Overview: Structure probing data (2A3 and DMS) for a 177-nucleotide construct. For 2A3 the reverse transcriptase was SuperScript II with manganese. The RNA was probed in 150 mM KOAc, 10 mM MgCl2 and 150 mM bicine (pH 8.5) at 24 C. The 2A3 profile rests on 2,886 reads.
[RMDB]
RNA sequence: GGGAACGACUCGAGUAGAGUCGAAAACCAAGUCUUCUAAGCAAUCUGCUUAAGGCUUCCAAACUUACCUUAAUUUGGUAAGAAAAUAAGCUGCCCUAUUUUUCUUUCUUCUUCUCUUACAACUGGACGUGUAUUAAUGGUUCGCCAUUAAUACACGAAAAGAAACAACAACAACAAC
Reactivity to 2A3 in 0.01 (KOAc 150mM, MgCl2 10mM, bicine 150mM(pH8.5), 24C), signal-to-noise 3, nucleotides 027 to 126: c000c000a010a000g010u000c020u130u000c030u110a000a000g000c010a040a300u080c100u300g000c000u020u010a020a010g030g010c000u060u000c060c060a120a130a110c010u010u000a000c000c000u150u170a150a150u300u190u090g000g000u010a000a000g060a050a120a000a020u070a020a010g030c050u040g000c030c010c010u020a120u070u060u000u050u010c000u040u100u000c000u060u000c000u060u000c010u000c000u040u100a090c030a190a070c070u020g030g010a010
Reactivity to DMS in 0.01 (KOAc 150mM, MgCl2 10mM, bicine 150mM(pH8.5), 24C), signal-to-noise 2, nucleotides 027 to 126: c020c030a110a030g030u010c010u000u010c150u010a030a050g030c000a180a170u000c170u020g040c010u000u020a000a040g010g010c010u000u000c090c160a090a110a140c000u000u000a010c000c000u000u010a090a140u000u000u000g010g010u000a000a000g000a110a070a090a110u010a050a080g010c040u000g000c020c020c040u000a040u000u000u000u000u000c010u000u000u020c030u000u000c050u000u000c020u020c020u020u000a070c150a070a150c070u010g010g010a300

Reactivities are given for positions 27 through 126. High 2A3 reactivity points to a flexible backbone, as in loops and unpaired stretches.